This 207-nucleotide RNA was probed chemically with 2A3. The reactions ran in a buffer of 150 mM KOAc, 10 mM MgCl2 and 150 mM bicine (pH 8.5), at 24 C.
RNA sequence: GGGAACGACUCGAGUAGAGUCGAAAAGUGCGGUGGGUACCUUCUUGCUGCAUCCGCAGGCAGACUCGGCGGCGCUGAGAAUGUCUUAUCUGACUCGCCAUUGUCCGCGGCUGAUGUAUCGAGUUUCGAGACUUUCAUAGUUCGCAGCCCACCGACAGAGAAUUCAGAGAUUCGUCUCUGAAUUCUCAAAAGAAACAACAACAACAAC
Reactivity to 2A3 in 0.01 (KOAc 150mM, MgCl2 10mM, bicine 150mM(pH8.5), 24C), signal-to-noise 3, nucleotides 027 to 156: g300u300g020c010g000g010u010g000g030g010u100a090c000c030u060u060c000u000u050g000c000u000g010c000a010u010c010c030g000c010a040g170g010c000a020g000a010c020u060c130g010g020c030g020g000c110g000c130u070g030a010g060a110a120u210g130u140c080u170u160a130u080c050u050g120a160c020u020c040g000c010c010a110u120u200g000u000c010c000g000c010g050g000c000u020g000a000u000g000u000a030u010c010g000a020g050u020u070u170c070g030a060g020a040c010u090u170u080c220a120u170a130g000u060u070c020g020c090a030g000c000c000c000a000c000c010g000a000c020a000